[RMDB]
Source: RMDB library OK1LIB, as collected in RNAgym. The record gives the reactivity of an RNA of 177 nucleotides to DMS and 2A3. For DMS the reverse transcriptase was MarathonRT. Conditions: 150 mM KOAc, 10 mM MgCl2 and 150 mM bicine (pH 8.5), 24 C. For 2A3 the reverse transcriptase was SuperScript II with manganese. Reactivities are given for positions 27 through 126. For DMS, 5,084 sequencing reads were counted.

RNA sequence: GGGAACGACUCGAGUAGAGUCGAAAAGAUUUUAGUACAUGGUGAUACUACAACGACUUUUGUAGGAAGUUUGGCAGCAUUUUAUCAUCAAAUUCCGGUUGGACAUGUAGAAGCUGGACUUCGAACAACUUGAGACACAGUUCGCUGUGUCUCAAGUAAAAGAAACAACAACAACAAC
Reactivity to DMS in 0.01 (KOAc 150mM, MgCl2 10mM, bicine 150mM(pH8.5), 24C), signal-to-noise 4, nucleotides 027 to 126: g000a160u040u030u010u020a060g020u020a040c080a100u010g020g020u010g000a080u010a060c010u030a020c080a050a060c230g010a200c080u010u020u010u000g040u010a090g020g010a040a020g000u010u010u010g030g020c030a080g030c060a070u000u000u010u030a070u010c040a020u020c080a030a060a130u010u010c050c020g010g020u010u010g000g000a040c180a050u000g010u000a100g000a080a060g040c010u000g000g020a030c030u000u000c010g000a070a050c230a030
Reactivity to 2A3 in 0.01 (KOAc 150mM, MgCl2 10mM, bicine 150mM(pH8.5), 24C), signal-to-noise 3, nucleotides 027 to 126: g040a030u120u170u180u140a130g050u040a050c060a100u120g120g020u070g120a100u030a030c000u050a050c000a120a020c040g240a020c060u100u070u040u150g040u000a060g030g070a000a020g010u030u020u070g040g020c040a010g040c010a090u000u050u000u270a060u050c070a000u010c010a000a040a130u070u060c070c000g100g000u050u090g050g020a040c040a040u030g010u040a060g030a150a040g020c020u040g060g000a100c030u000u000c000g080a060a020c030a000